Chemical mapping of a 177-nucleotide RNA with 2A3 and DMS.
[RMDB]
RNA sequence: GGGAACGACUCGAGUAGAGUCGAAAAAAACCGUGUUGUUUAUAUCGAGUCUCUUUUGGUAUAAGCGUCAAGUCCAUCGGAGAGAUCAUCAUUUUGUUCAUCUUAAUGCCCUUUUGUGUAGGAAAUUCAGUAUAGGAUGUUUCGACAUCCUAUACUGAAAAGAAACAACAACAACAAC
Reactivity to 2A3 in 0.01 (KOAc 150mM, MgCl2 10mM, bicine 150mM(pH8.5), 24C), signal-to-noise 2, nucleotides 027 to 126: a010a000a000c040c010g020u070g000u040u050g000u000u010u000a100u010a030u090c040g070a020g090u050c040u000c000u140u110u060u100g040g000u060a040u000a150a070g000c000g040u020c040a010a030g020u000c020c010a040u050c070g010g010a020g000a010g010a050u020c000a020u010c010a040u040u030u100u120g040u020u030c040a040u020c050u050u110a130a060u100g050c000c000c000u020u090u020u110g070u010g050u080a030g000g070a000a040a030u050u000
Reactivity to DMS in 0.01 (KOAc 150mM, MgCl2 10mM, bicine 150mM(pH8.5), 24C), signal-to-noise 2, nucleotides 027 to 126: a050a100a080c040c020g000u010g020u010u010g000u000u020u000a060u010a040u060c030g010a120g020u030c120u010c080u010u000u000u020g020g010u000a040u020a070a050g020c060g010u030c040a030a110g010u000c020c040a030u020c070g000g000a050g000a090g010a090u000c010a050u000c110a030u000u000u000u000g010u000u000c020a060u010c020u010u000a020a060u000g010c050c010c030u000u010u010u020g020u000g020u000a090g010g000a090a050a090u010u000
2A3 adducts were read by reverse transcription with SuperScript II with manganese.
Source: RMDB libraries RFM100 and RFMREP, as collected in RNAgym.